[RMDB]
RNA sequence: GGGAACGACUCGAGUAGAGUCGAAAAGAAGCAAAUCAGACGCAGCAGAAGGCUUCAGCUACUGUCAGAAGAAAUUGCAGUCAAGAAGGCCCAUAAGCCAGAUGACCAAGUAGAAGAAAGUUAUGUCUAUGAUGGACAAGUUCGCUUGUCCAUCAUAAAAAGAAACAACAACAACAAC
Reactivity to DMS in 0.01 (KOAc 150mM, MgCl2 10mM, bicine 150mM(pH8.5), 24C), signal-to-noise 4, nucleotides 027 to 126: g010a070a090g030c020a030a080a130u010c080a110g010a090c090g020c030a030g040c020a070g020a110a120g010g020c040u010u000c050a100g010c040u000a040c050u000g020u000c100a060g020a140a060g010a080a110a090u010u000g010c030a070g000u000c080a070a080g010a210a120g010g020c010c000c080a080u010a080a140g000c070c070a060g020a150u000g010a050c040c040a020a050g000u010a050g000a070a070g000a080a070a040g010u000u000a050u020g010u010c060
Reactivity to 2A3 in 0.01 (KOAc 150mM, MgCl2 10mM, bicine 150mM(pH8.5), 24C), signal-to-noise 2, nucleotides 027 to 126: g040a040a000g020c020a000a000a160u100c030a010g040a040c040g000c070a030g020c000a020g040a140a020g090g040c020u070u060c070a010g070c020u070a030c000u030g110u100c030a050g000a100a030g040a030a300a010u120u080g000c010a000g000u010c000a000a100g080a110a010g120g000c040c000c020a140u150a110a020g000c010c000a030g000a090u020g010a020c030c000a030a040g020u060a030g030a070a000g030a040a080a020g050u180u090a080u120g020u000c010
Structure probing data (DMS and 2A3) for a 177-nucleotide construct. The reactions ran in a buffer of 150 mM KOAc, 10 mM MgCl2 and 150 mM bicine (pH 8.5), at 24 C. 2A3 adducts were read by reverse transcription with SuperScript II with manganese. The 2A3 profile rests on 1,397 reads. Values are in units of 0.01, from 0 to 300, in steps of 10. Source: RMDB library OK2TST, as collected in RNAgym.